[RMDB]
Conditions: 150 mM KOAc, 10 mM MgCl2 and 150 mM bicine (pH 8.5), 24 C. Structure probing data (DMS and 2A3) for a 177-nucleotide construct. The DMS profile rests on 4,452 reads. Source: RMDB library OK2TST, as collected in RNAgym.
RNA sequence: GGGAACGACUCGAGUAGAGUCGAAAAUCGAGCCGGUCGGAAUCGCCCCACUCGUCCCAGGCGGCGAGUGUGUCGCCGUCGACGCGUUCUUCGAUCGUUUGCUCUGCGUCGCGGUCGUACUCGACGCACGUGGGUAAUGCUUCGGCAUUACCCACGUAAAAGAAACAACAACAACAAC
Reactivity to DMS in 0.01 (KOAc 150mM, MgCl2 10mM, bicine 150mM(pH8.5), 24C), signal-to-noise 4, nucleotides 027 to 126: u010c020g000a020g010c300c190g000g010u000c020g000g010a110a100u010c050g010c070c030c070c060a040c030u000c010g020u000c000c040c120a140g000g000c060g010g000c000g000a010g020u010g020u010g020u010c090g020c050c130g010u010c030g000a020c030g000c020g000u000u000c050u000u010c040g010a040u000c100g000u000u000u010g010c020u000c030u000g020c010g020u000c010g010c150g000g000u010c120g000u000a100c010u000c010g010a040c090g020c040
Reactivity to 2A3 in 0.01 (KOAc 150mM, MgCl2 10mM, bicine 150mM(pH8.5), 24C), signal-to-noise 3, nucleotides 027 to 126: u040c000g000a050g230c030c030g040g000u040c020g010g120a140a130u170c030g020c000c020c000c000a030c000u040c020g060u030c020c010c020a050g150g000c050g000g000c010g020a020g010u070g040u070g020u020c050g000c040c030g050u080c020g000a000c030g000c010g050u080u030c010u060u060c020g080a130u020c080g120u020u120u130g010c020u010c060u060g020c030g120u020c030g030c040g000g000u010c000g010u020a020c000u000c020g030a030c010g040c010